[RMDB]
RNA sequence: GGGAACGACUCGAGUAGAGUCGAAAAGAUAUGGAUUAUACCUCACUACCCACCAAAUACAUUGAGGUGGAUCGGAAACGAUCCACUACCCACCAAUGUCAUUUGAGGUGAGGUAUAAUCCUAAGUCCUUCAUGCAUUGCUUCGGCAAUGCAUGAAGAAAAGAAACAACAACAACAAC
Reactivity to DMS in 0.01 (KOAc 150mM, MgCl2 10mM, bicine 150mM(pH8.5), 24C), signal-to-noise 1, nucleotides 027 to 126: g000a160u000a210u050g000g010a080u000u000a000u000a000c000c000u010c080a000c010u000a110c080c050c140a300c180c000a000a020a000u010a010c000a000u000u000g000a110g000g000u000g000g010a020u020c000g000g020a100a130a060c010g000a000u000c000c020a000c000u000a010c070c020c170a300c190c000a000a020u000g000u000c170a000u020u000u000g000a290g070g000u000g020a000g000g000u000a000u000a000a000u000c000c000u000a010a120g000u000c050
Conditions: 150 mM KOAc, 10 mM MgCl2 and 150 mM bicine (pH 8.5), 24 C.
The record gives the reactivity of an RNA of 177 nucleotides to DMS.